[RMDB]
RNA sequence: GGGAACGACUCGAGUAGAGUCGAAAAAGAUCUAUCUCAUGACGAGUGGUGGAAUACUUUGACUCAUGAGAGAGAAGCUGAGGCGAAGGCGUCUACCUAGAGGGUUUCUGUCGAUCAAGGGCGAGAGUAGGAGUAUCCAACAGGAUUAGAGACCCUGCUACAGAUUGUACUUCGGUACAAUCUGUAGAAAAGAAACAACAACAACAAC
Reactivity to DMS in 0.01 (KOAc 150mM, MgCl2 10mM, bicine 150mM(pH8.5), 24C), signal-to-noise 2, nucleotides 027 to 156: a060g010a130u000c010u010a020u000c010u000c000a040u010g000a000c000g000a300g030u000g020g010u000g000g000a150a110u030a010c030u000u000u000g000a220c130u010c010a010u010g020a040g000a050g000a050g000a060a220g020c040u010g000a090g010g010c060g010a040a130g000g020c040g030u010c050u000a040c010c010u000a090g010a040g020g020g010u000u000u000c030u000g000u000c020g000a080u000c040a060a070g040g040g010c030g020a140g010a050g000u010a030g000g000a070g030u000a100u000c040c050a070a130c050a110g000g000a170u000u000a060g000a160g000a080c020c000c010u010g000
Reactivity to 2A3 in 0.01 (KOAc 150mM, MgCl2 10mM, bicine 150mM(pH8.5), 24C), signal-to-noise 5, nucleotides 027 to 156: a000g070a010u030c010u030a020u010c000u010c000a000u010g020a010c020g020a020g020u040g010g020u060g070g140a140a070u110a130c030u140u130u150g030a030c010u010c010a010u010g000a000g010a000g010a000g000a050a030g040c050u050g010a030g040g010c040g040a040a030g080g010c020g030u000c030u030a040c010c010u060a080g020a070g070g040g000u010u060u020c020u020g040u030c000g010a080u070c050a080a100g010g000g010c020g010a030g000a000g050u020a020g000g030a020g000u040a040u040c020c000a030a040c010a060g040g000a030u030u070a050g020a020g000a050c000c000c010u020g020